The record gives the reactivity of an RNA of 177 nucleotides to 2A3. For 2A3, 645 sequencing reads were counted. The RNA was probed in 150 mM KOAc, 10 mM MgCl2 and 150 mM bicine (pH 8.5) at 24 C. Source: RMDB library OK1LIB, as collected in RNAgym. As a SHAPE reagent, 2A3 marks flexible, mostly unpaired nucleotides at the ribose 2'-OH.
[RMDB]
RNA sequence: GGGAACGACUCGAGUAGAGUCGAAAAGCAUCUUCACCUGCGGGAAGAGCAAAAGCACAGUGAGGUCGCAUUCGUCACCAUCAAGCAUUUUGGCAUGAAAUGCAUUAGUCGUGCUCGUCACUUGUAAGCGAAGAGGCAUCUUCGGAUGCCUCUUCGCAAAAGAAACAACAACAACAAC
Reactivity to 2A3 in 0.01 (KOAc 150mM, MgCl2 10mM, bicine 150mM(pH8.5), 24C), signal-to-noise 1, nucleotides 027 to 126: g070c000a090u020c020u100u070c070a130c080c060u020g000c070g010g000g000a010a010g000a010g050c040a120a000a000a000g090c120a060c030a100g020u040g050a020g090g000u100c080g000c070a060u150u050c020g060u040c020a040c040c000a030u150c060a000a080g050c000a000u000u000u000u170g300g040c100a080u280g050a010a010a000u100g000c020a050u050u170a030g060u010c010g020u000g020c000u000c010g190u030c040a030c050u130u170g000u070a010a070